[RMDB]
RNA sequence: GGGAACGACUCGAGUAGAGUCGAAAAGCUUAUAGCUUGGCAAUCUCAUGUCAAAUAAGGAAAAGAAGAGGAACCCAAGGUAUGUUUCUCAUCUACCUUCUUUGACAUGGGACUGCCUAAGCUAACACAAAACUAACAGGUUCGCCUGUUAGUUUUGAAAAGAAACAACAACAACAAC
Reactivity to 2A3 in 0.01 (KOAc 150mM, MgCl2 10mM, bicine 150mM(pH8.5), 24C), signal-to-noise 2, nucleotides 027 to 126: g020c060u220u140a060u040a300g000c000u030u000g000g000c000a000a020u000c000u000c000a000u000g000u000c000a000a010a010u010a000a010g000g010a110a180a040a030g000a030a030g010a020g010g010a010a000c000c070c110a130a050g190g040u220a090u220g010u000u000u000c010u000c000a020u010c000u050a080c000c000u000u020c010u000u010u010g010a000c000a000u000g010g000g000a000c000u000g000c000c000u000a000a010g000c000u030a030a000c060a000
Reactivity to DMS in 0.01 (KOAc 150mM, MgCl2 10mM, bicine 150mM(pH8.5), 24C), signal-to-noise 2, nucleotides 027 to 126: g000c120u010u000a090u000a000g010c000u010u000g000g000c000a000a030u000c010u000c000a000u000g000u000c010a000a010a000u010a020a000g000g010a060a080a060a040g010a020a150g010a020g000g010a010a000c010c260c180a120a130g030g020u010a100u010g020u000u000u000c000u000c000a060u000c000u010a100c000c000u010u000c050u000u000u000g010a010c000a010u000g010g010g010a000c020u000g010c000c000u000a000a000g010c000u000a030a140c190a190
Description: This 177-nucleotide RNA was probed chemically with 2A3 and DMS.